Chemical mapping of a 177-nucleotide RNA with DMS and 2A3.
Reactivities are given for positions 27 through 126.
Conditions: 150 mM KOAc, 10 mM MgCl2 and 150 mM bicine (pH 8.5), 24 C.
For 2A3, 2,272 sequencing reads were counted.
For 2A3 the reverse transcriptase was SuperScript II with manganese.
The data come from the RNA Mapping Database (RMDB), library OK1LIB.
RNA sequence: GGGAACGACUCGAGUAGAGUCGAAAACAUAGGUUUCCGUCAUCGCCUGCGCCUCGAUCGCCGUCGGCACGAUCUUUUUCUGUCCGAAAGGGCUGAUGCCGCCGACAUGAUAGCCCGUCAGCCGCUCAAUGAGUACCGUGUUCGCACGGUACUCAUUAAAAGAAACAACAACAACAAC
Reactivity to DMS in 0.01 (KOAc 150mM, MgCl2 10mM, bicine 150mM(pH8.5), 24C), signal-to-noise 2, nucleotides 027 to 126: c100a140u080a060g020g020u040u000u020c010c010g000u000c030a080u000c070g020c000c010u040g010c070g000c030c000u000c040g020a030u010c050g020c080c060g000u000c010g000g010c010a240c070g000a090u030c040u050u000u010u040u010c030u020g010u000c040c080g010a060a050a100g020g010g000c000u000g010a040u010g030c160c090g000c010c050g000a060c050a070u010g000a100u010a090g010c040c030c000g000u000c090a110g000c000c030g000c100u000c030
Reactivity to 2A3 in 0.01 (KOAc 150mM, MgCl2 10mM, bicine 150mM(pH8.5), 24C), signal-to-noise 2, nucleotides 027 to 126: c040a040u160a020g000g100u020u010u030c030c020g050u050c020a110u090c020g010c030c050u070g010c040g020c020c010u050c030g050a050u010c020g000c030c000g040u020c000g010g030c020a010c030g100a050u060c020u090u070u040u070u020c030u080g060u000c000c010g060a090a030a050g040g030g000c000u000g020a040u060g050c030c060g010c000c000g020a010c000a010u190g100a130u120a060g050c000c000c000g030u020c000a010g010c020c000g030c030u030c020